[RMDB]
RNA sequence: GGGAACGACUCGAGUAGAGUCGAAAAUGCCAAGGAGAAUUGACAAUACUUGGUGACUGACUUCAUCUAGAAUGGGAGGAAGAAGGCUAUGUCAAGAAGGACUCCAAAGUUUUUGGUCUUAUGAUAUUCAAGAUCAUAAGAACCGACAGAGGGAAGAAUUCCAGUUCGGAUUCGUCCGAACUGGAAUAAAAGAAACAACAACAACAAC
Reactivity to 2A3 in 0.01 (KOAc 150mM, MgCl2 10mM, bicine 150mM(pH8.5), 24C), signal-to-noise 1, nucleotides 027 to 156: u080g010c000c000a000a000g020g100a060g170a200a290u240u140g070a100c040a030a110u020a140c000u020u000g010g000u040g000a010c020u030g010a000c000u000u060c080a110u020c110u070a070g120a180a170u190g060g030g000a020g080g000a060a000g020a010a010g010g020c100u050a100u110g010u080c000a080a000g030a030a080g080g010a060c000u000c040c020a020a080a100g070u100u050u000u300u300g000g000u000c000u000u000a000u000g000a000u030a020u000u170c080a040a070g070a300u000c000a010u000a010a000g040a250a100c000c070g040a040c070a060g010a020g070g000g000a000a030g060a060
This 207-nucleotide RNA was probed chemically with 2A3. Reactivities are rounded to 0.1 and cut off at 0 and 3. For 2A3, 338 sequencing reads were counted. The reactions ran in a buffer of 150 mM KOAc, 10 mM MgCl2 and 150 mM bicine (pH 8.5), at 24 C. Source: RMDB library OK3TST, as collected in RNAgym. For 2A3 the reverse transcriptase was SuperScript II with manganese.